RNA sequence: GGGAACGACUCGAGUAGAGUCGAAAAUAAGCUAGGCGCUCAAGAGUUGUAUCCACAGGGUAGUUUCCAACUCCGACUGGUGUGAAGAAGGAGCCGUUCCACGCAGGACGCGAACAAGAAUAACCCGGAAAUUAGGUAAGUUCGCUUACCUAAUUUCAAAAGAAACAACAACAACAAC
Reactivity to 2A3 in 0.01 (KOAc 150mM, MgCl2 10mM, bicine 150mM(pH8.5), 24C), signal-to-noise 2, nucleotides 027 to 126: u080a030a020g060c070u070a090g010g000c030g000c050u020c050a060a030g010a020g010u020u060g050u060a250u030c010c010a010c020a010g010g000g010u030a070g050u020u040u030c040c050a050a060c000u010c020c000g030a060c020u030g040g080u170g090u080g190a120a100g030a020a010g040g020a010g000c020c010g040u010u000c010c000a080c040g020c040a050g040g050a020c020g020c030g040a070a020c040a070a040g020a050a100u080a070a050c000c000c040g000
Reactivity to DMS in 0.01 (KOAc 150mM, MgCl2 10mM, bicine 150mM(pH8.5), 24C), signal-to-noise 4, nucleotides 027 to 126: u020a120a140g010c110u000a130g000g010c030g010c030u000c050a120a130g000a030g010u000u010g000u000a110u000c010c010a050c070a210g010g010g000u010a040g010u000u000u000c020c050a060a120c040u000c020c030g000a200c030u000g010g010u010g000u000g020a070a060g010a070a190g000g000a040g020c020c010g000u010u000c000c020a090c100g000c070a080g010g010a110c080g010c080g000a050a040c120a060a070g000a050a040u000a070a100c020c010c020g000